An RNA of 177 nucleotides, treated with 2A3 and DMS and read out base by base.
Conditions: 150 mM KOAc, 10 mM MgCl2 and 150 mM bicine (pH 8.5), 24 C.
The DMS profile rests on 24,542 reads.

RNA sequence: GGGAACGACUCGAGUAGAGUCGAAAAUUCGGUCGCCGCGGAUCACUGGCGUCCAGCGGAGAAACAGGAGCUCGUCUCCUUCCUUUCGCUGCUGGCUCCACAUCCGAUCGUCGCUGAAGCGCCACGCCAUAUAAUCCAUGUUCGCAUGGAUUAUAUGAAAAGAAACAACAACAACAAC
Reactivity to 2A3 in 0.01 (KOAc 150mM, MgCl2 10mM, bicine 150mM(pH8.5), 24C), signal-to-noise 7, nucleotides 027 to 126: u020u010c010g020g060u240c040g000c020c010g030c010g010g000a000u000c010a010c070u010g000g010c020g080u120c010c000a000g000c000g050g010a020g000a030a050a100c300a160g000g010a000g000c050u120c300g300u130c100u010c010c000u000u040c000c000u010u010u010c010g000c010u010g000c000u000g000g000c000u000c000c020a050c030a010u000c000c010g020a260u050c010g020u010c010g000c010u030g000a030a010g020c040g050c060c010a080c040g050c030
Reactivity to DMS in 0.01 (KOAc 150mM, MgCl2 10mM, bicine 150mM(pH8.5), 24C), signal-to-noise 7, nucleotides 027 to 126: u000u000c010g010g000u000c010g010c040c010g010c010g000g000a010u000c020a040c070u000g000g010c050g000u020c000c000a010g010c010g010g010a050g000a010a010a010c200a010g000g000a010g010c030u010c300g000u020c000u000c000c000u000u000c030c020u000u000u000c000g010c000u000g010c000u000g000g000c010u000c000c000a010c120a020u000c010c000g000a040u010c010g000u000c010g000c000u000g010a030a040g010c130g010c020c020a060c170g010c160